[RMDB]
RNA sequence: GGGAACGACUCGAGUAGAGUCGAAAAAAACGAGCAGGGGCAACUGGACUGAAUGCAAUAGUGAUCAAUACUUCAACUGUCGGCGGGACAUCUCCCCCAAGUGAAACGCCGAUCAAGGUACCGAAGGCAACACCUAGUUGUUCGCAACUAGGUGUUGAAAAGAAACAACAACAACAAC
Reactivity to DMS in 0.01 (KOAc 150mM, MgCl2 10mM, bicine 150mM(pH8.5), 24C), signal-to-noise 1, nucleotides 027 to 126: a030a020a070c090g000a110g000c020a040g010g000g010g000c060a170a070c030u020g010g020a100c050u000g000a060a070u000g020c030a040a060u000a090g000u000g010a070u030c120a050a050u020a060c040u000u000c010a050a120c040u030g020u000c000g000g000c040g000g000g020a300c010a040u010c020u000c020c000c000c040c050a070a180g000u000g000a000a300a170c000g000c000c030g000a030u000c140a090a000g000g000u010a040c210c110g000a120a000g040g000